[RMDB]
RNA sequence: GGGAACGACUCGAGUAGAGUCGAAAACAUCCACUGCUACGGCAGUGGAUGAACGAGGUAGGUACGCCUACCUCGAAAGGCGGAUGUUGCCAUAGACAUUAAACGUCCAUGGUACGCCAUGGACGAAGCAUACGGAUGAGUUCGCUCAUCCGUAUGCAAAAGAAACAACAACAACAAC
Reactivity to 2A3 in 0.01 (KOAc 150mM, MgCl2 10mM, bicine 150mM(pH8.5), 24C), signal-to-noise 2, nucleotides 027 to 126: c010a000u000c000c000a000c000u000g020c000u010a080c230g170g000c000a010g000u020g000g010a000u000g000a020a010c030g010a000g000g000u010a010g010g000u030a020c190g100c020c020u020a000c000c000u000c010g000a050a030a010g030g030c070g050g010a060u050g020u130u160g000c030c040a070u060a020g080a030c020a030u090u110a100a140a020c010g000u000c010c000a000u020g020g000u080a050c170g040c030c000a000u000g000g030a000c000g020a000a000
Reactivity to DMS in 0.01 (KOAc 150mM, MgCl2 10mM, bicine 150mM(pH8.5), 24C), signal-to-noise 2, nucleotides 027 to 126: c000a000u000c000c000a000c010u020g010c010u010a100c180g060g010c000a020g000u020g000g050a000u000g020a020a030c000g000a000g010g050u000a010g000g050u000a140c300g010c010c020u010a000c020c000u000c000g000a020a060a050g000g030c040g000g000a050u000g000u000u000g010c000c020a100u000a070g000a040c060a030u000u010a050a130a290c010g000u000c000c000a030u000g000g000u000a050c240g010c000c040a020u000g000g020a010c010g000a020a060
Conditions: 150 mM KOAc, 10 mM MgCl2 and 150 mM bicine (pH 8.5), 24 C. Structure probing data (2A3 and DMS) for a 177-nucleotide construct. Values cover nucleotides 27 to 126. For DMS, 1,515 sequencing reads were counted. For 2A3, 2,956 sequencing reads were counted.